An RNA of 207 nucleotides, treated with 2A3 and read out base by base. It was measured as part of the RMDB library M2RFPK.

RNA sequence: GGGAACGACUCGAGUAGAGUCGAAAAGCAACUUAGGAUUUUAGGCUCCCCGUGCGUGUCUCGAACCAUGCCAGGCCAAACCCACGGGGGCUGGCGGUCCCCGUGCGGUCAAAAUCAAACCGCUGGAAAAACAGUUCUAGCUUCGGCUAGAACUGAAGAUCGAAUGCUAGUUCGCUAGCAUUCGAUCAAAAGAAACAACAACAACAAC
Reactivity to 2A3 in 0.01 (KOAc 150mM, MgCl2 10mM, bicine 150mM(pH8.5), 24C), signal-to-noise 1, nucleotides 027 to 156: g000c040a010a050c060u140u140a120g170g000a190u120u100u040u180a070g000g000c010u080c020c050c020c020g020u090g000c020g000u050g020u030c040u020c170g080a030a020c030c020a020u040g000c000c010a000g010g000c000c000a130a060a010c000c000c000a000c010g000g000g020g000g000c000u000g000g010c020g000g000u000c000c000c010c010g000u010g010c090g000g000u010c020a030a020a040a140u130c020a070a100a090c010c000g000c010u000g010g000a100a150a010a000a010c000a000g000u000u000c000u000a000g020c000u040u010c180g080g010c010u010a010g000a000a000c000u000g000a000a000
About this RNA:
Reactivities are given for positions 27 through 156.